[RMDB]
RNA sequence: GGGAACGACUCGAGUAGAGUCGAAAAUGAUUGAGCGUAGCACACACUCAGACUGUACGACAGUCUGACACACACCUACGCUAGUGCAUCGUGUGUGUGAUAUCGAUGUAGCACGUAAAUGAAGUAAUAAUAAGUCUAUCUUCGGAUAGACUUAUUAAAAAGAAACAACAACAACAAC
Reactivity to 2A3 in 0.01 (KOAc 150mM, MgCl2 10mM, bicine 150mM(pH8.5), 24C), signal-to-noise 9, nucleotides 027 to 126: u220g020a070u100u140g050a030g040c020g000u020a020g000c040a010c000a000c000a010c030u010c000a000g000a010c000u020g030u160a130c130g130a050c230a000g000u000c000u000g010a000c000a000c000a000c000a000c010c020u070a030c030g010c020u020a030g090u060g100c010a030u040c050g010u020g010u010g000u000g000u010g110a030u020a030u180c080g020a050u020g020u040a060g050c020a010c050g040u070a040a050a080u130g070a090a020g070u120a020a160
Reactivity to DMS in 0.01 (KOAc 150mM, MgCl2 10mM, bicine 150mM(pH8.5), 24C), signal-to-noise 9, nucleotides 027 to 126: u010g010a120u000u000g010a210g010c010g010u000a060g020c020a040c040a050c050a130c190u000c010a010g010a010c000u000g010u000a150c290g010a140c010a010g010u000c000u000g000a030c050a030c070a050c080a050c090c030u000a030c050g010c040u010a060g020u010g010c030a060u000c080g010u010g010u000g010u000g010u000g000a120u010a060u000c070g010a060u000g010u000a080g020c030a040c050g010u000a040a070a060u000g000a100a100g010u010a060a100
An RNA of 177 nucleotides, treated with 2A3 and DMS and read out base by base. For 2A3 the reverse transcriptase was SuperScript II with manganese. Values cover nucleotides 27 to 126. Conditions: 150 mM KOAc, 10 mM MgCl2 and 150 mM bicine (pH 8.5), 24 C. The 2A3 profile rests on 29,609 reads.